[RMDB]
RNA sequence: GGGAACGACUCGAGUAGAGUCGAAAACGCUGGUAGAACGCUCCGCCCCGCGGGUCGUCGGAGUACUGGUCCAGCGAGACGAUGUUGGCUCCGUGGCCGCUCAGCACCGCGCUGACGGUGGCGACGAUGCCGGUCCGGUCCCUGCCCCGCACGACCACUUACCUACGGAUUUCGAUCCGUAGGUAAGAAAAGAAACAACAACAACAAC
Reactivity to 2A3 in 0.01 (KOAc 150mM, MgCl2 10mM, bicine 150mM(pH8.5), 24C), signal-to-noise 2, nucleotides 027 to 156: c000g010c000u000g080g000u110a110g040a300a030c030g030c000u000c040c000g020c000c020c020c060g030c100g030g000g020u110c140g060u100c010g010g020a020g000u060a070c110u090g010g070u010c000c020a000g010c010g020a030g010a010c030g010a060u130g080u220u190g050g020c030u050c070c020g000u060g050g010c000c040g030c080u030c020a000g020c010a040c160c180g080c050g010c080u040g060a130c050g000g050u090g040g040c010g020a040c060g040a070u190g020c050c050g000g020u000c010c030g010g020u030c020c000c020u060g000c000c000c000c000g010c000a040c070g070a030c000c050a030